[RMDB]
RNA sequence: GGGAACGACUCGAGUAGAGUCGAAAAUGAGCUUGCAAGCAAGCGCUUGGAAAUUAUUUUAGGACUAAUUAAAGCGAUUAGUAUCAUUGAUAAAAUCAUCAAAUUAAUUAGAUCAGCAGUUGACAAACAUACCGGCUAUAUUCGUAUAGCCGGUAUGAAAAGAAACAACAACAACAAC
Reactivity to DMS in 0.01 (KOAc 150mM, MgCl2 10mM, bicine 150mM(pH8.5), 24C), signal-to-noise 2, nucleotides 027 to 126: u000g010a050g000c120u000u000g000c040a000a040g010c000a240a260g010c260g000c040u010u010g020g010a080a050a080u000u000a020u000u010u000u020a140g010g010a080c010u000a000a020u000u010a010a030a120g000c300g010a000u000u010a080g040u000a020u000c020a190u020u010g000a010u000a010a020a090a120u020c110a030u010c010a020a300a250u000u010a010a020u010u000a020g010a010u000c010a110g000c130a030g000u000u010g010a050c110a120a030a160